[RMDB]
RNA sequence: GGGAACGACUCGAGUAGAGUCGAAAAUAAGAUUCGUCUUAGACAUAGGGGUCUCGGGUCGGAGCGCAUGGAGAGGCUGAAGCCUCCACGGCUACCCACCUCCAUGACCCGCUCCGUCCCCGAGACGGAGGCACCCACGAGCGCGAUUCGUCGCGAACAGUAAGGAGGUCUUCGGACCUCCUUACUGAAAAGAAACAACAACAACAAC
Reactivity to 2A3 in 0.01 (KOAc 150mM, MgCl2 10mM, bicine 150mM(pH8.5), 24C), signal-to-noise 1, nucleotides 027 to 156: u140a020a010g000a070u090u060c150g030u020c090u040u130a010g020a110c010a050u170a030g000g000g060g060u000c000u000c000g060g000g000u000c000g030g000a010g000c060g010c000a010u000g000g020a030g010a060g020g060c100u120g070a190a000g020c010c010u100c100c300a070c240g010g010c000u020a140c010c000c000a040c020c000u000c000c000a060u040g120a210c000c110c020g000c000u000c010c000g000u040c000c000c000c000g000a000g000a000c000g000g000a010g010g000c060a070c000c000c010a020c000g180a170g050c000g010c010g090a090u110u220c160g030u020c000g180c020g000a070a070
Conditions: 150 mM KOAc, 10 mM MgCl2 and 150 mM bicine (pH 8.5), 24 C. An RNA of 207 nucleotides, treated with 2A3 and read out base by base. For 2A3, 518 sequencing reads were counted.